Overview
This 207-nucleotide RNA was probed chemically with DMS and 2A3. The RNA was probed in 150 mM KOAc, 10 mM MgCl2 and 150 mM bicine (pH 8.5) at 24 C. For 2A3 the reverse transcriptase was SuperScript II with manganese. 2A3 is a SHAPE reagent: it acylates the 2'-hydroxyl of flexible nucleotides of all four kinds. Reactivities are rounded to 0.1 and cut off at 0 and 3. For DMS the reverse transcriptase was MarathonRT.
RNA sequence: GGGAACGACUCGAGUAGAGUCGAAAAUUCAUUUAAAUGAAUUGAAACAAAUUUAAUACAAGUGGAUGUAGGAUAACCGUCCGUCCUUUACAUUGGUAUAAAAGUGAUCUAAAAUUGUAUUUAUAAUUGCGCUCUCGCGUGUUCGCACGCGAGAGAAGUUAAAGAUUGAGUUCGCUCAAUCUUUAACAAAAGAAACAACAACAACAAC
Reactivity to DMS in 0.01 (KOAc 150mM, MgCl2 10mM, bicine 150mM(pH8.5), 24C), signal-to-noise 1, nucleotides 027 to 156: u000u010c000a030u000u010u020a090a140a070u010g020a050a010u000u000g000a220a110a170c020a080a060a180u010u000u010a020a040u000a010c010a020a040g040u000g010g020a040u000g020u000a060g010g040a070u010a040a130c040c160g040u010c020c030g000u010c010c010u000u000u000a120c020a150u000u000g020g010u000a030u000a020a000a040a190g010u000g000a040u000c030u000a030a030a060a100u010u000g010u010a090u000u000u000a100u000a090a090u000u000g010c050g050c000u000c000u010c000g020c010g060u010g020u000u010c300g050c000a000c090g020c010g010a030g010a010g020a020a090
Reactivity to 2A3 in 0.01 (KOAc 150mM, MgCl2 10mM, bicine 150mM(pH8.5), 24C), signal-to-noise 2, nucleotides 027 to 156: u030u000c000a000u060u130u250a290a300a120u030g000a020a000u080u070g050a070a070a020c070a020a080a040u180u280u240a060a030u090a030c020a030a030g040u000g110g030a040u060g030u090a020g050g050a020u080a170a170c020c070g020u020c010c000g020u010c000c000u010u150u010a040c030a070u040u110g040g010u110a040u110a260a080a000a050g060u080g060a020u000c040u120a050a040a150a150u100u050g000u010a030u040u110u000a090u090a070a180u150u080g050c040g010c020u010c000u000c000g000c000g000u010g030u000u020c090g000c110a000c000g000c000g000a000g010a000g000a000a000